The record gives the reactivity of an RNA of 177 nucleotides to 2A3.
It was measured as part of the RMDB library OK1LIB.
Reactivities are given for positions 27 through 126.

[RMDB]
RNA sequence: GGGAACGACUCGAGUAGAGUCGAAAAAGUUAGGUUACUUCCGUGAUAUGGUGCCAGGACCUGGAAGAGCCUACAGGAUAUCACCAAAUGGACUAGAAGCAGCAGAUGUAGUGUAUAUACCCGUGUCGACUCCUCUAGCCUUCGGGCUAGAGGAGUCAAAAGAAACAACAACAACAAC
Reactivity to 2A3 in 0.01 (KOAc 150mM, MgCl2 10mM, bicine 150mM(pH8.5), 24C), signal-to-noise 1, nucleotides 027 to 126: a000g170u120u030a050g100g040u000u080a220c000u000u120c000c000g130u010g000a080u070a000u170g000g000u000g140c170c000a050g000g110a000c000c120u100g000g000a000a000g000a000g000c000c000u000a000c040a000g040g050a030u040a040u180c030a030c000c000a010a010a010u050g020g040a050c040u080a000g000a070a000g140c070a000g000c030a000g000a120u000g020u080a000g010u060g030u030a000u000a000u000a080c140c030c090g000u050g130u030c000

For 2A3 the reverse transcriptase was SuperScript II with manganese. The reactions ran in a buffer of 150 mM KOAc, 10 mM MgCl2 and 150 mM bicine (pH 8.5), at 24 C.